[RMDB]
RNA sequence: GGGAACGACUCGAGUAGAGUCGAAAAGAUAUGGAGCCCCAGGAAUCAUCGCUUCACAGAGCUCGUGGUCGGAAACGACCAUAGAGCGACGAAGUGACUGGCGAUGAUUCCUGGGGCUCCUAAGUCACAACUUAACUUUCUUCGGAAAGUUAAGUUGAAAAGAAACAACAACAACAAC
Reactivity to DMS in 0.01 (KOAc 150mM, MgCl2 10mM, bicine 150mM(pH8.5), 24C), signal-to-noise 2, nucleotides 027 to 126: g000a070u010a300u000g010g030a020g020c020c000c000c000a010g000g000a030a010u010c010a010u000c020g000c010u000u010c010a010c000a060g020a290g050c000u010c000g020u010g000g000u000c000g040g000a120a070a260c000g010a010c020c000a000u000a040g040a010g020c000g000a090c300g010a120a090g010u000g000a030c300u020g020g010c000g010a020u010g000a040u000u000c000c000u000g010g000g000g000c010u000c000c010u010a010a070g010u000c010a260